[RMDB]
Overview:
Structure probing data (2A3) for a 207-nucleotide construct. The data come from the RNA Mapping Database (RMDB), library RNAMAK.

RNA sequence: GGGAACGACUCGAGUAGAGUCGAAAAUAUGGUCUUCGGACCAUAAAAAAAGGGGUCGUCGUUGAAAUGGAAUGGCUUUCAUACUGAAGCCUCCACGGUAUGGGCCGAGAGAUGGAGACGACGGAGGCACCCAAAAAGUAUUCGUUCGCGAAUACAACCUCUAGUGUUUGUUCGCAAACACUAGAGGAAAAGAAACAACAACAACAAC
Reactivity to 2A3 in 0.01 (KOAc 150mM, MgCl2 10mM, bicine 150mM(pH8.5), 24C), signal-to-noise 2, nucleotides 027 to 156: u040a000u000g000g010u010c020u010u090c300g160g010a000c000c000a000u000a000a000a000a000a000a000a050g040g030g000g020u130c070g000u020c000g030u060u000g040a040a030a020u130g060g190a270a190u230g030g000c050u100u250u300c050a030u000a000c000u030g000a060a010g020c000c020u000c000c010a030c010g000g000u000a000u000g030g010g000c070c140g100a090g020a000g000a220u020g040g000a040g000a020c000g000a010c000g000g000a020g000g000c000a070c000c000c050a010a090a070a010a070g040u040a000u040u000c040g000u030u150c300g010c040g150a000a000u010a000c000a000a070